The record gives the reactivity of an RNA of 170 nucleotides to DMS and 2A3.
Values cover nucleotides 27 to 129.
The RNA was probed in 150 mM KOAc, 10 mM MgCl2 and 150 mM bicine (pH 8.5) at 24 C.
Source: RMDB library 15KLIB, as collected in RNAgym.
RNA sequence: GGGAACGACUCGAGUAGAGUCGAAAAGCGAGGAGGAAAGCAAAGAAAGCAACGGGGCUAGCGAGUGGAUGUUCCGCCUCCCCGGAGUCCCGAGUGAGGCUUAUCCCGGGGAAUCCGGCCAAGUCCCAACCAAGUCAGUUCGCUGACUUGAAAAGAAACAACAACAACAAC
Reactivity to DMS in 0.01 (KOAc 150mM, MgCl2 10mM, bicine 150mM(pH8.5), 24C), signal-to-noise 9, nucleotides 027 to 129: g020c060g010a010g010g000a030g000g000a040a030a060g040c150a060a100a070g020a060a070a060g030c050a110a130c070g000g000g000g000c060u030a100g030c050g010a090g000u040g020g020a080u020g010u000u000c040c030g000c090c050u010c010c020c020c020g000g000a100g030u030c050c010c010g010a100g010u040g000a060g000g000c100u030u040a090u040c070c020c010g000g000g000g000a050a050u000c030c030g020g010c100c090a070a080g000u020c010c010c010a100a080c220
Reactivity to 2A3 in 0.01 (KOAc 150mM, MgCl2 10mM, bicine 150mM(pH8.5), 24C), signal-to-noise 9, nucleotides 027 to 129: g050c050g010a020g020g010a010g010g030a080a020a000g040c070a080a060a060g080a040a100a000g030c020a020a070c060g000g000g010g010c010u030a030g060c010g060a040g030u150g030g030a090u110g090u150u040c030c030g020c010c010u020c000c000c000c000g020g010a030g040u050c020c010c010g010a050g040u220g030a040g030g000c020u070u100a090u150c010c010c000g010g000g000g010a030a040u020c020c000g010g000c010c010a030a000g020u010c000c000c010a010a010c030